[RMDB]
RNA sequence: GGGAACGACUCGAGUAGAGUCGAAAAAGAUCAUUCGUGAUCUGCUGUAGCGUACUACUGUUCUUGGACCGACUAUGCAAGGUGGCUCCCAAAUAGGAGCCACUGAUGACCAUAAGUCGCUAGAACAGUAUCGCCGUCAUUGGACUUCGGUCCAAAAUCAUAGCGUCCUAUUCGUAGGACGCUAUGAAAAAGAAACAACAACAACAAC
Reactivity to DMS in 0.01 (KOAc 150mM, MgCl2 10mM, bicine 150mM(pH8.5), 24C), signal-to-noise 2, nucleotides 027 to 156: a040g000a030u000c010a090u000u000c240g030u000g000a020u010c000u000g010c070u020g000u010a060g020c000g000u000a080c170u000a020c010u010g020u000u000c010u000u020g090g010a070c110c020g000a070c010u000a000u000g000c010a070a240g010g020u000g010g010c000u000c000c010c010a070a200a270u030a030g000g010a040g010c000c000a000c000u000g010a040u010g000a130c300c010a030u000a050a120g010u000c000g000c010u010a020g010a020a020c000a010g020u000a010u000c010g030c040c020g000u000c070a150u000u000g010g000a060c040u000u000c250g040g020u000c000c010a000a010a060a200
Reactivity to 2A3 in 0.01 (KOAc 150mM, MgCl2 10mM, bicine 150mM(pH8.5), 24C), signal-to-noise 4, nucleotides 027 to 156: a010g030a030u030c030a060u110u290c300g080u100g010a010u020c000u030g010c080u120g160u270a040g030c030g030u060a100c060u010a000c000u000g000u000u010c010u020u070g040g030a140c100c070g010a000c050u000a000u000g000c060a090a120g000g000u000g000g000c000u010c030c010c000a100a300a060u300a080g000g000a000g000c000c000a010c000u000g000a020u040g040a020c050c000a000u000a090a120g000u000c010g000c020u010a000g000a010a000c000a000g000u000a000u030c010g010c030c020g150u140c080a100u000u060g000g000a020c000u060u030c200g120g000u050c000c000a030a010a020a010